[RMDB]
Source information:
An RNA of 207 nucleotides, treated with 2A3 and read out base by base. The 2A3 profile rests on 566 reads. The RNA was probed in 150 mM KOAc, 10 mM MgCl2 and 150 mM bicine (pH 8.5) at 24 C.
RNA sequence: GGGAACGACUCGAGUAGAGUCGAAAAGCAUGUUUAUGUGAACCUAAGGAUGAAUGUCAGUGACUGUAGAUUAGAAGCACUGAUUAUAGCAUUGGCUGCUUGGUGUUCACUUUAUUUGCAUCUGUGAGUUUCCAACAAGCCCUAAGUUUACUGACAACAGGAGUGGUAGUUUCGACUACCACUCCUGAAAAGAAACAACAACAACAAC
Reactivity to 2A3 in 0.01 (KOAc 150mM, MgCl2 10mM, bicine 150mM(pH8.5), 24C), signal-to-noise 2, nucleotides 027 to 156: g000c000a010u020g050u050u090u040a220u250g010u090g000a000a000c000c000u000a000a050g030g000a220u150g110a240a030u090g000u010c020a010g030u000g060a270c000u020g060u040a080g060a300u040u020a010g080a180a020g010c040a010c090u010g030a010u010u000a000u000a000g000c000a020u040u080g050g010c000u000g020c000u060u000g000g000u090g010u120u000c000a010c020u000u040u030a050u000u010u070g020c040a030u030c080u020g030u020g150a050g010u030u140u160c050c020a000a010c070a120a000g040c020c030c000u010a050a000g000u030u000u000a280c010u050g090a020c020a120a000
Reactivities are rounded to 0.1 and cut off at 0 and 3.